Source information:
Chemical mapping of a 207-nucleotide RNA with 2A3. Conditions: 150 mM KOAc, 10 mM MgCl2 and 150 mM bicine (pH 8.5), 24 C. For 2A3, 403 sequencing reads were counted. It was measured as part of the RMDB library M2RFPK.
RNA sequence: GGGAACGACUCGAGUAGAGUCGAAAAUACCUUGAGUAUUGCUGAAUUCGGUUUAGCGUGCAUGCUCUUGGCUAUUCUCAUAGUGAUUGUCAAAUUUGGAGUUACUUAUUCGUCAAUUCAAUAUUUAAAAAGGUGCCGAUGUUCGCAUCGGCACCAAGCCAUGAUAUCUCUUCGGAGAUAUCAUGGCAAAAGAAACAACAACAACAAC
Reactivity to 2A3 in 0.01 (KOAc 150mM, MgCl2 10mM, bicine 150mM(pH8.5), 24C), signal-to-noise 1, nucleotides 027 to 156: u060a000c000c000u010u020g000a000g000u060a120u290u120g000c000u000g060a240a180u130u270c160g090g010u220u140u170a080g030c040g040u050g000c000a020u010g000c000u000c020u000u000g000g010c000u010a070u070u000c010u010c020a030u140a060g150u080g050a040u050u060g020u010c010a010a080a080u050u010u040g150g000a170g100u120u110a110c010u030u070a010u050u020c020g000u010c030a010a000u030u120c020a020a090u050a200u210u160u240a220a130a070a010a080g000g000u000g000c000c000g000a000u000g000u010u110c120g010c060a000u000c010g000g000c030a000c000c000a000a000